[RMDB]
RNA sequence: GGGAACGACUCGAGUAGAGUCGAAAAACUUUUAGCGAUUAUCGUUAUAGAAAUGUCCUUGGCAUAUCGCAAUGCACAGAGGUAUUAGUAGCGCAAUAGCUAUUGAAGGACAUUACCUCUCAAAUAAUUGCGUUAUGGUAUUCGUACCAUAACGCAAAAAAGAAACAACAACAACAAC
Reactivity to DMS in 0.01 (KOAc 150mM, MgCl2 10mM, bicine 150mM(pH8.5), 24C), signal-to-noise 2, nucleotides 027 to 126: a050c060u000u010u000u000a100g030c020g010a160u000u010a030u000c040g020u010u000a030u000a090g030a090a030a030u010g000u000c010c010u000u000g010g020c040a040u000a030u000c110g030c120a080a020u010g000c060a100c300a070g000a050g000g000u010a050u000u000a040g020u010a000g010c010g010c080a090a130u000a160g010c010u000a020u010u000g030a140a060g000g000a050c080a060u010u000a030c030c020u000c000u000c180a120a080a080u000a080a120
Reactivity to 2A3 in 0.01 (KOAc 150mM, MgCl2 10mM, bicine 150mM(pH8.5), 24C), signal-to-noise 1, nucleotides 027 to 126: a040c050u130u060u120u120a050g000c010g130a130u130u030a080u220c010g010u010u010a020u050a040g120a000a110a000u010g000u010c020c030u030u060g020g000c060a050u020a080u300c070g010c010a000a080u100g010c050a030c010a110g070a120g010g000u080a010u000u020a010g010u000a000g010c020g020c050a200a300u080a090g020c010u000a040u030u060g020a000a050g070g000a000c040a000u010u010a000c000c000u010c010u020c070a110a110a130u120a070a090

The data come from the RNA Mapping Database (RMDB), library M2PK90. The record gives the reactivity of an RNA of 177 nucleotides to DMS and 2A3. Values are in units of 0.01, from 0 to 300, in steps of 10. For DMS the reverse transcriptase was MarathonRT. 2A3 adducts were read by reverse transcription with SuperScript II with manganese.